An RNA of 177 nucleotides, treated with 2A3 and DMS and read out base by base. The reactions ran in a buffer of 150 mM KOAc, 10 mM MgCl2 and 150 mM bicine (pH 8.5), at 24 C. 2A3 adducts were read by reverse transcription with SuperScript II with manganese. Reactivities are given for positions 27 through 126.
RNA sequence: GGGAACGACUCGAGUAGAGUCGAAAAGUGCGGGUAAAACCGAAUUGUGCAAAGCCUUGUUUGGUGCCACGCCGAGCCGUGUUGAUCAGGGUGAAUUACAGGGCAGACCGUGGAAACCACGUUCGCCAGACCCAUACGUGUUCGCACGUAUGGGUCUAAAAGAAACAACAACAACAAC
Reactivity to 2A3 in 0.01 (KOAc 150mM, MgCl2 10mM, bicine 150mM(pH8.5), 24C), signal-to-noise 1, nucleotides 027 to 126: g010u090g050c020g000g030g080u160a070a060a040a000c040c100g000a040a110u180u240g010u030g070c000a100a130a080g020c010c020u100u040g120u040u160u090g030g000u050g020c010c000a000c000g000c020c010g020a010g060c010c020g130u090g050u020u150g010a090u030c040a050g120g000g050u050g000a020a040u050u030a020c020a020g000g020g000c030a050g030a020c000c060g000u030g000g000a130a150a000c010c000a000c000g010u000u000c090g010c000c030
Reactivity to DMS in 0.01 (KOAc 150mM, MgCl2 10mM, bicine 150mM(pH8.5), 24C), signal-to-noise 2, nucleotides 027 to 126: g030u000g010c020g010g010g000u000a060a080a190a130c040c000g000a040a060u000u000g030u010g010c090a090a120a140g000c020c000u020u000g000u000u000u000g000g010u000g000c010c030a020c040g030c050c010g020a160g020c030c030g010u000g010u000u010g030a050u000c070a140g020g000g000u000g000a090a050u000u010a090c050a080g000g000g040c000a090g000a050c170c020g040u010g000g020a070a150a100c060c010a050c040g000u020u000c030g000c020c060